[RMDB]
RNA sequence: GGGAACGACUCGAGUAGAGUCGAAAAGAUAUGGAAUGUCAUAGCCUAUAAUCUCCAUCAGCUCGGAAACGAGCUGAGUGGAGGUAGGCUAGACAUUCCUAAGUCAAAAUCGGGCUUCGGCCCGAAACCUACCAUCUACGUUCGCGUAGAUGGUAGGAAAAGAAACAACAACAACAAC
Reactivity to 2A3 in 0.01 (KOAc 150mM, MgCl2 10mM, bicine 150mM(pH8.5), 24C), signal-to-noise 4, nucleotides 027 to 126: g030a000u080a040u140g010g020a040a000u000g030u040c130a300u040a010g000c010c010u140a130u070a300a290u190c010u000c000c010a030u020c000a000g000c000u010c010g050g000a060a070a060c000g000a000g000c010u010g010a010g010u050g000g010a000g000g000u020a000g000g000c000u010a000g010a010c000a010u010u030c000c000u000a050a020g020u000c000a000a030a040a300u070c010g020g000g000c020u130u140c300g140g000c020c020c010g000a000a000a000
Reactivity to DMS in 0.01 (KOAc 150mM, MgCl2 10mM, bicine 150mM(pH8.5), 24C), signal-to-noise 3, nucleotides 027 to 126: g000a070u000a300u010g000g000a030a000u000g010u000c010a140u000a010g020c000c000u000a110u000a260a140u010c000u010c010c010a060u000c010a000g010c000u000c000g020g000a100a100a270c010g010a030g020c000u010g010a000g010u000g020g010a000g040g020u000a000g000g000c000u000a000g000a010c000a000u000u000c000c000u000a000a100g010u000c030a130a060a120a130u000c010g000g000g010c000u000u010c220g030g000c000c000c000g000a000a040a060
Annotation:
An RNA of 177 nucleotides, treated with 2A3 and DMS and read out base by base. Values cover nucleotides 27 to 126. For DMS, 2,542 sequencing reads were counted. DMS adducts were read by reverse transcription with MarathonRT. The RNA was probed in 150 mM KOAc, 10 mM MgCl2 and 150 mM bicine (pH 8.5) at 24 C. For 2A3, 7,375 sequencing reads were counted.